[RMDB]
RNA sequence: GGGAACGACUCGAGUAGAGUCGAAAAUAAUCUGACAGGCCAUGAAAUCAGAUUUCAUGCGCAUCUCAUAUCAAGUCAGAUAUGGGGUGCAGAGACCUGGGUUAAUUCACAAACUCAGAAUUGUGAAGAUAGUAGUCUAUUUCGAUGGAUUGCUAUCAAAAGAAACAACAACAACAAC
Reactivity to DMS in 0.01 (KOAc 150mM, MgCl2 10mM, bicine 150mM(pH8.5), 24C), signal-to-noise 9, nucleotides 027 to 126: u040a070a070u010c040u010g010a170c030a020g000g020c030c000a000u000g000a010a020a030u010c230a110g000a300u000u000u000c010a010u000g000c150g010c000a010u000c010u000c010a010u000a000u000c000a120a180g010u050c260a080g000a000u000a000u000g000g000g000g020u000g000c000a090g010a050g010a100c020c010u000g000g000g010u010u000a050a140u010u000c010a000c020a000a010a060c090u020c130a120g010a080a080u010u000g000u000g000a040a060
Reactivity to 2A3 in 0.01 (KOAc 150mM, MgCl2 10mM, bicine 150mM(pH8.5), 24C), signal-to-noise 9, nucleotides 027 to 126: u080a000a060u040c020u020g050a020c010a020g020g010c020c010a010u010g020a010a010a020u170c120a090g110a270u020u000u010c010a010u020g040c020g000c080a000u000c000u000c010a000u010a000u000c030a040a150g300u110c060a030g030a000u000a000u000g000g000g000g000u000g000c000a010g020a010g010a070c000c000u010g000g000g020u040u100a070a070u100u030c010a010c010a040a050a040c060u110c160a060g100a170a180u050u030g010u010g010a030a070
Source: RMDB library OK1LIB, as collected in RNAgym. This 177-nucleotide RNA was probed chemically with DMS and 2A3. Values cover nucleotides 27 to 126. The 2A3 profile rests on 33,600 reads.